[RMDB]
RNA sequence: GGGAACGACUCGAGUAGAGUCGAAAAUGCAGAAAUAGCUGGUCUGGGAAAAACCCAGAUUCUUGGCGAUGCUGGCAAUGCUCCAAUCGCUGUGUUGUAACAUCUCUCUGGCAUUGGCCAUCCGCUGAGCUUGAGAUUUGUUCGCAAAUCUCAAGCUAAAAGAAACAACAACAACAAC
Reactivity to DMS in 0.01 (KOAc 150mM, MgCl2 10mM, bicine 150mM(pH8.5), 24C), signal-to-noise 1, nucleotides 027 to 126: u000g000c020a030g000a140a150a120u000a060g020c030u020g020g010u000c000u000g040g000g000a090a120a120a160a110c010c000c000a010g000a020u000u020c040u010u010g000g000c020g000a060u000g000c100u010g010g000c300a070a000u000g000c030u010c150c080a060a040u000c110g000c120u000g020u000g040u000u000g020u000a130a080c100a030u000c050u000c090u010c080u000g020g030c000a030u010u000g010g000c030c030a040u000c060c040g020c060u000g000

Background
This 177-nucleotide RNA was probed chemically with DMS. The RNA was probed in 150 mM KOAc, 10 mM MgCl2 and 150 mM bicine (pH 8.5) at 24 C. The data come from the RNA Mapping Database (RMDB), library OK2TST.